[RMDB]
RNA sequence: GGGAACGACUCGAGUAGAGUCGAAAAUCACAAAGCGGAUUUAGCUCGGUUGGGAGAGGUCCAGACCGAAGAUCUGGUUGUCCUGUGGACGAGGCACAGAAUUCGCACCAUAAACAACGGGAGAUUCAUCACUAUGCACGUUCGCGUGCAUAGUGAUAAAAGAAACAACAACAACAAC
Reactivity to 2A3 in 0.01 (KOAc 150mM, MgCl2 10mM, bicine 150mM(pH8.5), 24C), signal-to-noise 4, nucleotides 027 to 126: u100c030a020c040a140a140a010g010c010g050g000a020u000u030u050a040g010c000u010c010g050g060u120u240g060g010g000a160g010a070g000g040u040c000c000a000g010a000c020c080g150a060a010g060a080u010c010u010g020g020u030u070g100u060c000c010u040g050u130g040g000a040c010g020a060g050g000c020a020c000a040g040a020a010u030u010c000g000c000a010c000c000a060u160a050a140a040c080a040a030c060g040g040g010a130g010a060u050u080c050
Reactivity to DMS in 0.01 (KOAc 150mM, MgCl2 10mM, bicine 150mM(pH8.5), 24C), signal-to-noise 2, nucleotides 027 to 126: u020c050a070c240a070a130a090g000c060g000g000a000u000u000u000a120g000c000u000c010g010g030u010u060g040g000g000a030g000a110g000g000u010c020c040a040g010a020c040c080g010a100a060g000a130u000c000u020g040g000u030u000g040u000c040c020u000g000u000g000g000a130c060g000a010g000g050c120a110c110a160g000a030a070u010u000c000g000c000a070c020c050a080u010a030a120a020c120a090a100c060g000g000g000a100g000a190u010u000c070